[RMDB]
RNA sequence: GGGAACGACUCGAGUAGAGUCGAAAAACGAGGCCGUGCCUACUACGGUAGUCACGGCCUCGAAUUACGUUCAUCUACUUAAUCGUAGACGCAUCAAUACAUCAUUCAUGGAACGGGGGAUGGUGAAACUAGAAUCAAACGUUCGCGUUUGAUUCAAGGUACCUUUAUUGUUCGCAAUAAAGGUACCAAAAGAAACAACAACAACAAC
Reactivity to DMS in 0.01 (KOAc 150mM, MgCl2 10mM, bicine 150mM(pH8.5), 24C), signal-to-noise 1, nucleotides 027 to 156: a210c030g010a000g070g000c010c020g060u000g000c130c000u000a090c050u010a060c270g050g000u030a010g010u000c020a030c030g010g010c010c000u050c000g010a000a020u000u010a070c040g000u000u000c040a270u050c020u000a030c010u020u000a110a140u010c290g040u000a040g030a000c100g030c090a100u010c030a020a170u000a020c010a020u000c010a040u000u010c030a070u020g050g020a070a080c030g000g000g010g010g020a070u000g000g090u010g000a090a040a130c060u000a100g000a010a040u000c000a000a000a010c010g020u000u000c290g000c020g050u000u010u000g010a020u010u000c030a070a050
Reactivity to 2A3 in 0.01 (KOAc 150mM, MgCl2 10mM, bicine 150mM(pH8.5), 24C), signal-to-noise 2, nucleotides 027 to 156: a000c000g000a000g000g000c000c000g000u000g000c030c020u000a010c000u010a020c150g150g000u000a000g020u000c000a000c000g000g000c010c000u020c000g000a000a000u010u030a010c000g000u010u010c000a010u000c010u000a000c000u040u190a140a040u280c070g010u000a010g020a020c010g010c010a080u160c080a120a140u150a280c020a000u010c010a020u020u010c000a010u040g080g000a020a000c000g020g000g000g000g000a010u010g000g030u020g070a040a010a020c100u060a060g000a000a020u010c000a000a000a000c000g010u040u050c280g010c000g110u020u020u010g010a000u000u010c000a000a000

Structure probing data (DMS and 2A3) for a 207-nucleotide construct.